RNA sequence: GGGAACGACUCGAGUAGAGUCGAAAAAGUGGCCGUACGCGGCCACAACUCCUCGGCUCCUGCAUUGUACACACUGUGCGGAAAACAUGGACAUGCACAGCGCAUACAAUGUGGAUGCUGUGGAGAAUCCCAUCUGUCCUUUCGAGGACAGAUGGGAAAAAGAAACAACAACAACAAC
Reactivity to 2A3 in 0.01 (KOAc 150mM, MgCl2 10mM, bicine 150mM(pH8.5), 24C), signal-to-noise 4, nucleotides 027 to 126: a000g000u000g000g000c000c000g030u030a020c300g030c000g060g000c000c000a000c000a000a000c000u000c000c010u020c000g010g000c000u020c040c010u060g030c000a010u000u000g030u000a020c050a010c010a010c070u000g020u030g030c060g060g040a080a050a020a030c090a160u300g100g090a050c050a100u140g000c000a010c010a000g010c010g000c010a000u000a030c000a010a000u010g000u010g010g000a020u160g000c000u000g000u040g000g000a020g020a020a040
Reactivity to DMS in 0.01 (KOAc 150mM, MgCl2 10mM, bicine 150mM(pH8.5), 24C), signal-to-noise 1, nucleotides 027 to 126: a100g070u000g010g010c000c000g000u020a050c270g000c070g020g000c050c010a000c000a000a040c000u000c000c000u000c020g000g000c000u000c070c060u000g000c000a000u010u040g020u000a000c200a300c110a140c040u000g040u010g000c000g000g050a130a130a060a030c150a080u040g060g000a130c080a240u020g000c000a010c000a000g000c030g050c130a300u000a000c000a000a000u040g000u010g070g000a000u020g030c000u010g000u000g000g000a000g000a030a100
An RNA of 177 nucleotides, treated with 2A3 and DMS and read out base by base. Reactivities are given for positions 27 through 126. For 2A3 the reverse transcriptase was SuperScript II with manganese. For 2A3, 2,968 sequencing reads were counted. DMS adducts were read by reverse transcription with MarathonRT.